[RMDB]
RNA sequence: GGGAACGACUCGAGUAGAGUCGAAAACUGGUCGCUAUUUGCCAGAGUAUAAAGCCACCCGCGCUAUUGCCGGAGAUUUUAUGUCGCUGUGCAAAAAUGCUGAAUUGGCCUGUGAAGUGACGAUGCAAUCGACGUAACUUUUCGAAGUUACGUCGAUAAAAGAAACAACAACAACAAC
Reactivity to 2A3 in 0.01 (KOAc 150mM, MgCl2 10mM, bicine 150mM(pH8.5), 24C), signal-to-noise 1, nucleotides 027 to 126: c000u050g100g000u050c070g000c050u070a130u100u040u080g030c000c020a040g010a020g050u010a050u040a100a040a010g020c000c000a020c000c020c000g000c020g020c040u140a110u190u170g050c040c010g040g020a000g040a000u080u150u050u090a110u130g050u020c000g020c090u030g110u110g040c020a000a020a080a000a020u140g010c000u000g020a080a180u110u090g030g010c010c020u090g020u090g100a040a080g010u020g030a000c030g050a050u140g070c080a080
Reactivity to DMS in 0.01 (KOAc 150mM, MgCl2 10mM, bicine 150mM(pH8.5), 24C), signal-to-noise 3, nucleotides 027 to 126: c030u010g010g020u000c060g020c040u000a160u010u000u010g030c020c010a050g010a130g020u000a070u000a030a070a090g000c020c060a110c140c030c060g040c090g040c050u000a160u000u000g010c010c040g030g010a120g000a070u000u000u000u010a050u010g010u000c020g000c010u000g010u020g000c020a000a040a040a090a080u020g000c010u000g010a050a090u010u010g000g010c020c030u010g020u010g000a080a050g020u000g000a040c050g020a070u010g020c140a070